[RMDB]
RNA sequence: GGGAACGACUCGAGUAGAGUCGAAAAUGUUUGCAAUUCGUUGCAAACAAACUACGGAGAACGUUGCUCGGUAUAAACAGCGAACCCUUGGAAACAAGGGAACUAUGGAACGCUUCGGCGUUCCAAACAUCUCGUCACUUUUCGAAGUGACGAGAUGAAAAGAAACAACAACAACAAC
Reactivity to 2A3 in 0.01 (KOAc 150mM, MgCl2 10mM, bicine 150mM(pH8.5), 24C), signal-to-noise 2, nucleotides 027 to 126: u020g000u030u000u030g000c010a000a010u090u060c200g070u080u000g000c000a030a000a000c000a040a040a000c040u060a010c060g070g010a000g020a210a020c030g020u030u060g020c000u000c000g000g060u240a100u070a160a110a040c060a010g010c050g020a130a130c000c010c000u000u000g010g020a050a030a040c000a010a000g000g010g030a000a020c000u010a060u130g040g000a000a010c020g010c020u010u050c140g060g000c010g020u020u010c000c010a000a020a000
Reactivity to DMS in 0.01 (KOAc 150mM, MgCl2 10mM, bicine 150mM(pH8.5), 24C), signal-to-noise 2, nucleotides 027 to 126: u000g010u000u000u000g000c000a010a010u000u010c190g020u000u000g010c000a010a010a000c000a030a080a070c050u010a100c030g020g020a050g000a140a080c050g020u010u000g000c010u000c040g010g000u020a040u000a110a110a120c100a050g030c080g010a140a230c000c000c000u010u000g000g000a180a120a110c010a000a010g020g010g000a030a000c120u000a110u000g010g010a010a000c000g020c010u020u000c170g020g000c000g010u030u000c000c000a000a040a190
An RNA of 177 nucleotides, treated with 2A3 and DMS and read out base by base. For DMS the reverse transcriptase was MarathonRT. The 2A3 profile rests on 1,469 reads. Conditions: 150 mM KOAc, 10 mM MgCl2 and 150 mM bicine (pH 8.5), 24 C. The data come from the RNA Mapping Database (RMDB), library M2PK50. Values are in units of 0.01, from 0 to 300, in steps of 10.